[RMDB]
RNA sequence: GGGAACGACUCGAGUAGAGUCGAAAACAUGUGCCAUUAUGCCCACAGUCGUCGACCUUAAAAUGACGUUUUUGGACGAAAAGUAUGAAUCAACAAAGUGGAUGUAUCGUUGGCUUGUAGAUAAUACUACGACGACGUCAAUGGAUCUAAAGUGUGACCUUAGACUUACCUUCGGGUAAGUCUAAGGAAAAGAAACAACAACAACAAC
Reactivity to 2A3 in 0.01 (KOAc 150mM, MgCl2 10mM, bicine 150mM(pH8.5), 24C), signal-to-noise 3, nucleotides 027 to 156: c050a050u120g050u050g090c030c000a020u050u070a030u180g000c000c030c000a030c040a010g050u010c030g000u000c020g040a110c010c020u120u100a040a040a080a110u190g030a110c050g020u030u010u000u080u050g120g050a040c030g060a150a030a000a020g000u010a030u100g100a150a160u000c020a030a050c000a050a160a000g040u050g060g060a030u060g070u250a110u160c080g020u000u070g040g010c000u010u040g060u000a020g000a020u030a050a050u060a090c020u020a020c040g030a010c010g000a010c000g020u050c000a010a030u050g050g010a040u040c060u190a110a100a000g050u050g020u000g100a020
Reactivity to DMS in 0.01 (KOAc 150mM, MgCl2 10mM, bicine 150mM(pH8.5), 24C), signal-to-noise 2, nucleotides 027 to 156: c010a140u010g000u000g020c010c040a060u040u010a070u010g000c010c010c010a040c090a150g000u000c020g020u010c020g010a140c050c050u000u020a050a050a060a130u000g010a080c060g030u000u000u000u010u010g040g020a090c050g000a050a070a110a110g040u010a040u000g010a130a100u000c030a130a140c050a070a060a160g050u010g010g020a070u010g000u020a070u000c080g050u010u000g030g000c050u000u000g000u020a040g010a120u010a100a080u000a070c000u000a180c020g010a040c010g000a020c010g020u000c050a030a090u000g000g010a060u010c030u010a050a040a120g010u000g000u000g000a140